[RMDB]
RNA sequence: GGGAACGACUCGAGUAGAGUCGAAAAGAUAUGGAGAUCUCAUGAACUACAGCAUCCAGUCGGAAACGACUGGAGUGCUGCAUGAGGAUCUCCUAAGUCAAAAGAAUGUCAGUUCGCUGACAUUCAAGCUUACUCAUGGGUUCGCCCAUGAGUAAGCAAAAGAAACAACAACAACAAC
Reactivity to DMS in 0.01 (KOAc 150mM, MgCl2 10mM, bicine 150mM(pH8.5), 24C), signal-to-noise 1, nucleotides 027 to 126: g030a070u000a300u000g000g010a010g020a000u000c000u010c010a010u000g010a150a080c210u020a300c000a010g030c000a130u010c000c000a030g000u000c000g020g010a100a070a190c020g030a000c000u000g000g000a010g010u010g040c000u000g000c030a010u000g010a080g040g000a020u000c020u000c000c000u000a000a160g000u000c020a070a160a080a130g020a060a020u000g000u010c000a020g000u000u010c300g000c030u000g000a010c000a010u000u000c000a070a090
Reactivity to 2A3 in 0.01 (KOAc 150mM, MgCl2 10mM, bicine 150mM(pH8.5), 24C), signal-to-noise 1, nucleotides 027 to 126: g000a010u040a020u170g010g010a010g010a000u010c020u020c020a030u000g060a180a190c140u290a240c300a130g000c000a010u000c000c010a000g000u000c000g000g080a020a050a020c010g000a010c000u020g000g020a000g010u000g000c010u010g030c050a000u000g000a110g200g000a000u000c000u060c000c000u000a000a010g000u000c020a000a010a040a280g010a000a000u010g000u010c000a000g020u020u180c300g050c160u000g000a000c000a010u010u000c010a020a010
Notes
Conditions: 150 mM KOAc, 10 mM MgCl2 and 150 mM bicine (pH 8.5), 24 C. The record gives the reactivity of an RNA of 177 nucleotides to DMS and 2A3. For 2A3, 2,335 sequencing reads were counted. For 2A3 the reverse transcriptase was SuperScript II with manganese. Values cover nucleotides 27 to 126.